[RMDB]
RNA sequence: GGGAACGACUCGAGUAGAGUCGAAAAGCCGUGAUUUGUUCGAAGAGUUAGCCGGCCCAGAGCGUGCUAACGGGUAACGCCGCGAGCGUUGGGCCGAACGGGGUGGCUUCCGGCGCGGCGGUGAGCACUCACCGUUCUUGUUCGCAAGAACGGUGAGAAAAGAAACAACAACAACAAC
Reactivity to 2A3 in 0.01 (KOAc 150mM, MgCl2 10mM, bicine 150mM(pH8.5), 24C), signal-to-noise 3, nucleotides 027 to 126: g040c050c020g020u030g080a220u090u100u130g060u050u130c060g040a060a030g050a030g070u040u060a000g000c000c000g080g010c020c040c010a060g030a040g090c010g020u160g000c020u020a000a040c000g000g010g040u080a110a020c040g000c060c000g020c000g030a050g070c010g030u080u040g000g000g000c000c000g010a030a000c040g020g020g000g010u070g060g010c000u190u010c010c000g030g020c030g000c000g030g050c040g010g030u030g050a030g040c040a010
Reactivity to DMS in 0.01 (KOAc 150mM, MgCl2 10mM, bicine 150mM(pH8.5), 24C), signal-to-noise 2, nucleotides 027 to 126: g010c020c050g000u000g000a130u030u000u050g000u010u000c030g010a060a080g010a090g000u030u010a010g000c030c000g020g010c000c010c050a120g000a120g010c060g020u050g010c000u050a060a040c020g000g040g010u000a040a170c040g020c010c000g070c180g000a060g070c000g000u010u000g020g000g000c020c000g000a060a030c050g060g010g000g080u020g000g040c020u000u020c090c040g000g000c000g040c060g020g020c060g000g030u000g020a050g000c170a210